About this RNA: The record gives the reactivity of an RNA of 207 nucleotides to 2A3. The 2A3 profile rests on 525 reads.
RNA sequence: GGGAACGACUCGAGUAGAGUCGAAAAUUAAGUUUUAGUCAUCUUUGGUAGUGUAGUUUUAAGACUUGACGCACCUUAAAGUGAAGUUUAGUCUAGUCAAAUUUGUAAGUUUUGGAAGAUGAGCGGAAUUUGAUGAAAGAGUCAUCUUUGCUAAGUAGAGUUCUAUUGUCUUCGGACAAUAGAACUCAAAAGAAACAACAACAACAAC
Reactivity to 2A3 in 0.01 (KOAc 150mM, MgCl2 10mM, bicine 150mM(pH8.5), 24C), signal-to-noise 1, nucleotides 027 to 156: u160u030a070a020g060u060u050u050u180a080g040u050c030a000u000c060u060u050u080g030g020u000a060g010u120g020u110a040g030u010u000u030u300a130a080g020a020c000u030u030g000a000c000g060c000a000c010c000u070u110a170a120a000g000u040g110a150a020g000u030u070u090a010g000u000c040u000a010g050u030c010a020a020a020u030u040u110g130u050a060a170g020u000u040u090u030g030g000a010a010g000a030u020g000a000g050c010g010g010a030a000u050u010u000g000a060u000g020a110a000a000g110a020g010u010c000a000u000c000u060u050u000g110c050u030a070a040g020u050a010

It was measured as part of the RMDB library RSTRND. The RNA was probed in 150 mM KOAc, 10 mM MgCl2 and 150 mM bicine (pH 8.5) at 24 C.